[RMDB]
RNA sequence: GGGAACGACUCGAGUAGAGUCGAAAAAUCAAACGCUGGGUGGCUCUUGUAAUGGAGCUGCUGCUGAGCGUGCCCCAGAGGCUUUGAGGUUUAACAUUAAUGACACCUCUGUCAUUCUUGCUGACGGUUCAAUUGUACUUCAUACUGCUUUAGGAACCAGGCUCCUCUAAUUCGUUAGAGGAGCCUGAAAAGAAACAACAACAACAAC
Reactivity to 2A3 in 0.01 (KOAc 150mM, MgCl2 10mM, bicine 150mM(pH8.5), 24C), signal-to-noise 1, nucleotides 027 to 156: a000u130c140a130a090a000c030g030c020u010g000g000g010u010g000g000c000u000c000u080u200g110u240a080a190u300g070g000a100g020c030u020g010c000u090g020c020u190g070a020g000c010g000u000g000c000c010c000c000a020g010a000g010g030c030u080u110u150g030a030g030g000u070u150u200a050a010c020a030u080u120a130a170u100g020a000c000a030c060c030u120c130u020g000u000c000a060u160u040c010u050u150g000c000u020g070a030c050g010g100u040u010c020a080a030u100u080g050u080a090c030u020u020c010a000u050a120c120u030g100c030u100u190u190a060g060g000a040a000c070